This 170-nucleotide RNA was probed chemically with DMS and 2A3.
It was measured as part of the RMDB library 15KLIB.
For DMS the reverse transcriptase was MarathonRT.
The RNA was probed in 150 mM KOAc, 10 mM MgCl2 and 150 mM bicine (pH 8.5) at 24 C.
RNA sequence: GGGAACGACUCGAGUAGAGUCGAAAAGAGCGAGGAGAAAAGCAAAGAAAGCAACGGGGCUAGCCGACGGGUGUUCCGCCUCCCGAGAGGGGACGAGUGAGGCUUAUCCCGGGGAACCCGGCGAAUCAGAGUCUGAACUUCGGUUCAGACAAAAGAAACAACAACAACAAC
Reactivity to DMS in 0.01 (KOAc 150mM, MgCl2 10mM, bicine 150mM(pH8.5), 24C), signal-to-noise 7, nucleotides 027 to 129: g030a060g030c040g000a070g000g000a050g000a050a020a060a050g050c130a050a050a070g020a060a020a090g020c010a080a160c120g000g000g000g000c080u010a060g040c000c000g020a090c090g030g020g050u030g000u070u030c040c050g000c050c020u000c000c010c060g020a120g000a090g050g020g020g020a050c060g030a050g000u070g020a090g010g050c030u000u090a120u030c020c010c010g000g000g000g010a110a060c030c030c020g020g040c090g030a040a060u060c080a000g020a190
Reactivity to 2A3 in 0.01 (KOAc 150mM, MgCl2 10mM, bicine 150mM(pH8.5), 24C), signal-to-noise 6, nucleotides 027 to 129: g040a000g020c020g000a020g010g030a010g030a000a070a030a010g040c070a070a120a010g110a040a080a010g080c030a050a060c090g010g000g010g010c020u030a020g030c030c000g050a050c020g030g020g000u060g040u120u040c040c030g030c030c010u060c010c030c010g100a100g020a020g020g000g010g010a000c020g010a030g040u130g020a020g030g000c010u040u070a060u040c000c000c000g000g000g000g000a010a020c010c020c000g000g010c020g020a010a030u110c040a020g020a030